[RMDB]
RNA sequence: GGGAACGACUCGAGUAGAGUCGAAAAGAUAUGGAUGAAUGCAGGACAUGUUGGUAUUCGGAAACGAAUAACCAACAACAGCCUGUCAUUCAUCCUAAGUCAAAGACGUAGUGUUCGCACUACGUCACGGAGGAUAUUUCUUCGGAAAUAUCCUCCGAAAAGAAACAACAACAACAAC
Reactivity to 2A3 in 0.01 (KOAc 150mM, MgCl2 10mM, bicine 150mM(pH8.5), 24C), signal-to-noise 3, nucleotides 027 to 126: g020a050u060a040u130g010g000a010u000g000a020a000u020g000c000a000g020g030a120c120a290u180g010u010u000g010g010u000a000u000u000c010g000g030a060a050a040c020g000a000a010u080a150a240c010c000a000a000c000a000a010c010a010g160c000c000u000g010u050c010a000u000u010c000a000u000c000c010u000a010a020g020u020c040a140a040a090g000a000c020g000u000a020g000u000g070u130u100c300g040c090a010c000u000a010c000g000u010c010a000
Reactivity to DMS in 0.01 (KOAc 150mM, MgCl2 10mM, bicine 150mM(pH8.5), 24C), signal-to-noise 3, nucleotides 027 to 126: g010a070u000a300u020g000g010a010u000g000a000a000u000g000c020a010g000g000a070c100a180u000g020u000u000g010g010u000a010u000u000c010g000g000a120a150a240c000g010a010a010u010a060a110c000c000a000a000c000a010a040c300a240g000c010c000u010g000u010c020a000u000u010c000a020u010c000c000u000a020a060g010u010c050a160a110a100g010a010c010g020u000a000g040u000g000u000u020c290g050c010a020c000u000a010c000g010u000c000a020
Structure probing data (2A3 and DMS) for a 177-nucleotide construct. As a SHAPE reagent, 2A3 marks flexible, mostly unpaired nucleotides at the ribose 2'-OH. For 2A3, 7,593 sequencing reads were counted. The data come from the RNA Mapping Database (RMDB), library TTRDES. 2A3 adducts were read by reverse transcription with SuperScript II with manganese. For DMS, 3,325 sequencing reads were counted.